Conditions: 150 mM KOAc, 10 mM MgCl2 and 150 mM bicine (pH 8.5), 24 C. Chemical mapping of a 177-nucleotide RNA with 2A3 and DMS. The 2A3 profile rests on 40,452 reads. Reactivities are given for positions 27 through 126.
[RMDB]
RNA sequence: GGGAACGACUCGAGUAGAGUCGAAAAUAGGCCGUCCGUCGCUUGCCGACCACGGUCGGUAGCCAAGGCAUCGCUUCAACUUGGCGUUGCCGCCGUGAUGUGUGGCGCCAUUUAGAGGGUGAGCUCGAAUUUAUUUUACGUUCGCGUAAAAUAAAUUAAAAGAAACAACAACAACAAC
Reactivity to 2A3 in 0.01 (KOAc 150mM, MgCl2 10mM, bicine 150mM(pH8.5), 24C), signal-to-noise 9, nucleotides 027 to 126: u150a030g020g030c090c010g020u020c010c000g030u030c020g010c070u090u190g040c040c010g010a010c010c000a010c020g120g020u270c050g000g000u030a020g000c000c010a020a010g050g020c070a150u140c120g060c120u190u160c070a100a090c020u020u030g010g000c020g120u140u180g000c000c010g000c000c000g020u020g020a120u090g090u030g060u120g010g000c010g010c010c000a040u110u150u100a090g020a060g040g050g020u080g040a040g010c010u020c040g010
Reactivity to DMS in 0.01 (KOAc 150mM, MgCl2 10mM, bicine 150mM(pH8.5), 24C), signal-to-noise 9, nucleotides 027 to 126: u030a120g010g010c040c040g010u000c020c030g010u000c030g010c030u020u010g020c070c010g000a050c020c020a020c030g010g000u040c010g010g010u000a180g010c010c020a020a010g000g010c100a090u020c080g010c070u020u020c100a110a090c020u000u000g000g000c010g000u030u030g010c000c010g000c030c010g010u000g000a110u020g000u030g030u040g010g010c000g010c040c030a070u020u010u020a080g010a100g000g000g010u010g000a110g000c020u010c070g010